[RMDB]
RNA sequence: GGGAACGACUCGAGUAGAGUCGAAAAGCUGCCGGGAGUCCUUCGGCGACCUGGCGUUCCGCCCCGGAUGGCAGUGGCGCUGCCGGUGUCGCGAUCCAGGCCGCAAUGUCGCGCCAGGGCCGCUCGGUCGCAGAUGGUAAUUCGUUACCAUCUGCGAAAAAGAAACAACAACAACAAC
Reactivity to 2A3 in 0.01 (KOAc 150mM, MgCl2 10mM, bicine 150mM(pH8.5), 24C), signal-to-noise 2, nucleotides 027 to 126: g040c050u060g030c050c000g020g000g030a000g040u030c000c020u090u130c130g080g010c000g060a060c010c020u020g000g000c010g020u110u010c050c030g030c010c000c000c010g060g070a090u100g060g080c030a070g140u030g050g020c080g000c080u100g080c030c000g020g000u090g000u010c030g010c060g050a020u000c030c020a030g010g040c050c010g010c020a090a180u160g070u180c000g000c000g000c030c000a020g000g010g000c040c020g030c050u020c000g070g000
Reactivity to DMS in 0.01 (KOAc 150mM, MgCl2 10mM, bicine 150mM(pH8.5), 24C), signal-to-noise 2, nucleotides 027 to 126: g000c050u000g030c010c020g000g010g010a300g030u000c020c080u010u010c080g000g020c000g010a030c040c000u010g000g000c040g000u010u010c140c050g020c170c050c030c020g000g030a110u010g010g010c070a070g020u010g010g020c030g010c060u000g010c040c020g020g010u000g010u000c080g010c050g020a040u000c040c060a090g000g040c080c020g020c070a120a040u000g010u000c040g010c070g000c010c010a050g000g000g010c040c000g000c040u000c050g010g000
Conditions: 150 mM KOAc, 10 mM MgCl2 and 150 mM bicine (pH 8.5), 24 C.
This 177-nucleotide RNA was probed chemically with 2A3 and DMS.
DMS adducts were read by reverse transcription with MarathonRT.
Source: RMDB library OK2TRN, as collected in RNAgym.
2A3 adducts were read by reverse transcription with SuperScript II with manganese.
For 2A3, 2,157 sequencing reads were counted.